This 177-nucleotide RNA was probed chemically with DMS and 2A3. For 2A3 the reverse transcriptase was SuperScript II with manganese. For DMS, 1,796 sequencing reads were counted.
RNA sequence: GGGAACGACUCGAGUAGAGUCGAAAAGGGUGGCUCUACAUUUGUUGCGGGUUCGAGACCCGUCAGAGCGAAAGCUCUGUAGCUCAAUGGUAGAGCGGUGUAGUCACCAAAGGUCGGUUCGCCGACCGUUGACAGCAUCGUUCGCGAUGCUGUCAACAAAAGAAACAACAACAACAAC
Reactivity to DMS in 0.01 (KOAc 150mM, MgCl2 10mM, bicine 150mM(pH8.5), 24C), signal-to-noise 3, nucleotides 027 to 126: g010g000g030u000g020g010c030u000c130u020a040c020a020u000u000u000g010u000u000g000c030g000g000g000u010u000c090g010a300g000a050c000c000c000g060u000c010a010g000a000g000c010g000a120a030a200g010c000u010c000u010g030u000a030g010c010u000c010a030a030u000g020g020u020a030g000a000g090c010g000g000u000g000u000a030g000u000c000a020c020c000a090a120a110g000g020u000c000g010g010u000u050c260g010c010c000g010a010c000c000
Reactivity to 2A3 in 0.01 (KOAc 150mM, MgCl2 10mM, bicine 150mM(pH8.5), 24C), signal-to-noise 1, nucleotides 027 to 126: g070g000g000u020g000g000c040u010c030u060a020c020a030u040u050u150g060u040u010g020c000g000g010g010u010u030c020g000a020g020a010c000c000c020g000u020c010a000g000a000g000c000g070a040a010a000g020c000u000c000u000g030u000a000g000c000u000c010a010a030u240g290g070u170a050g000a000g000c000g020g000u000g010u000a000g000u020c000a000c020c000a100a060a020g010g000u010c010g000g000u050u060c170g030c100c000g000a000c000c000